[RMDB]
RNA sequence: GGGAACGACUCGAGUAGAGUCGAAAAAGGAAGGUCUGGAUCGGCGGCAGCUCAUCCUUCAAUCCACCUUCCUCCGAGGUGAGCGACAGGCCGGUGAUGCUUUCGAACUUGUCGAGCGAGCAGCCUUCGAUCCUGCCGGCGUGCAGCAGUCCGUAGAUAACCCUUUUACUUUCGAGUAAAAGGGUUAAAAAGAAACAACAACAACAAC
Reactivity to DMS in 0.01 (KOAc 150mM, MgCl2 10mM, bicine 150mM(pH8.5), 24C), signal-to-noise 3, nucleotides 027 to 156: a080g010g010a060a010g020g000u000c090u010g030g010a030u000c010g040g010c190g000g020c030a120g020c030u020c030a100u000c030c020u020u010c070a110a110u010c060c010a050c000c020u000u000c040c050u000c040c040g020a070g030g010u000g010a110g020c020g010a100c030a030g000g020c010c050g010g020u020g020a100u010g000c090u000u000u000c030g010a080a080c040u010u000g010u000c020g010a150g040c060g000a070g030c000a120g020c010c010u000u010c030g010a030u000c040c000u000g020c000c020g000g000c040g010u000g020c040a080g030c040a090g000u000c050c030g020u000a130g000a270
Reactivity to 2A3 in 0.01 (KOAc 150mM, MgCl2 10mM, bicine 150mM(pH8.5), 24C), signal-to-noise 2, nucleotides 027 to 156: a000g150g010a090a020g010g010u100c150u060g010g010a000u010c010g000g000c000g000g000c030a010g010c050u060c000a140u140c010c000u100u010c050a050a040u090c010c000a010c000c000u040u050c030c030u000c000c040g030a030g020g040u050g010a030g020c020g000a010c020a030g020g020c040c060g000g020u060g040a060u110g030c050u030u080u130c020g030a070a040c020u040u030g060u020c040g000a040g060c040g000a000g000c030a000g000c010c020u010u010c000g000a010u000c000c010u000g050c010c020g030g000c040g050u090g000c020a010g010c010a020g010u020c020c020g070u040a000g020a080

Conditions: 150 mM KOAc, 10 mM MgCl2 and 150 mM bicine (pH 8.5), 24 C. Structure probing data (DMS and 2A3) for a 207-nucleotide construct. Reactivities are given for positions 27 through 156. For DMS, 9,132 sequencing reads were counted. 2A3 adducts were read by reverse transcription with SuperScript II with manganese. Source: RMDB library OK3TST, as collected in RNAgym. DMS adducts were read by reverse transcription with MarathonRT. High 2A3 reactivity points to a flexible backbone, as in loops and unpaired stretches. For 2A3, 1,498 sequencing reads were counted.